An RNA of 177 nucleotides, treated with 2A3 and DMS and read out base by base.
RNA sequence: GGGAACGACUCGAGUAGAGUCGAAAAGACUUUGACCUGGAGACAAGCAAGGAAUCCUCCAGCGUUUCCUUUGAUGUCAAAUUUGAGGAAUGGUGGCACAGACAGUUACAACAGAAUAGAGUUAUUCUCUUCUCAAAGCUUUCGAGCUUUGAGAAGAAAAAGAAACAACAACAACAAC
Reactivity to 2A3 in 0.01 (KOAc 150mM, MgCl2 10mM, bicine 150mM(pH8.5), 24C), signal-to-noise 3, nucleotides 027 to 126: g040a020c010u070u050u100g050a060c010c020u000g060g000a040g010a050c100a090a050g140c050a070a050g070g040a100a050u080c010c020u000c030c000a010g010c030g090u030u030u030c000c000u030u060u060g110a080u020g040u130c070a050a120a120u080u060u130g100a090g020g060a060a020u070g060g020u030g080g000c030a000c000a090g110a010c020a030g040u110u130a060c030a150a000c020a100g100a040a030u140a040g100a060g060u050u020a120u110u060c000
Reactivity to DMS in 0.01 (KOAc 150mM, MgCl2 10mM, bicine 150mM(pH8.5), 24C), signal-to-noise 2, nucleotides 027 to 126: g040a080c040u010u010u010g000a050c120c020u000g030g010a050g020a040c100a020a100g010c050a090a010g000g000a100a070u000c000c020u020c050c060a020g000c080g000u040u000u010c020c000u000u010u050g010a060u010g000u010c010a020a160a030u030u000u020g030a160g000g000a030a090u000g010g020u070g000g020c020a030c030a080g000a090c040a030g030u000u000a030c130a090a000c120a080g010a020a010u020a060g000a140g000u010u000a140u000u000c020
Overview: Values cover nucleotides 27 to 126. 2A3 adducts were read by reverse transcription with SuperScript II with manganese. Values are in units of 0.01, from 0 to 300, in steps of 10. For 2A3, 1,880 sequencing reads were counted. Conditions: 150 mM KOAc, 10 mM MgCl2 and 150 mM bicine (pH 8.5), 24 C.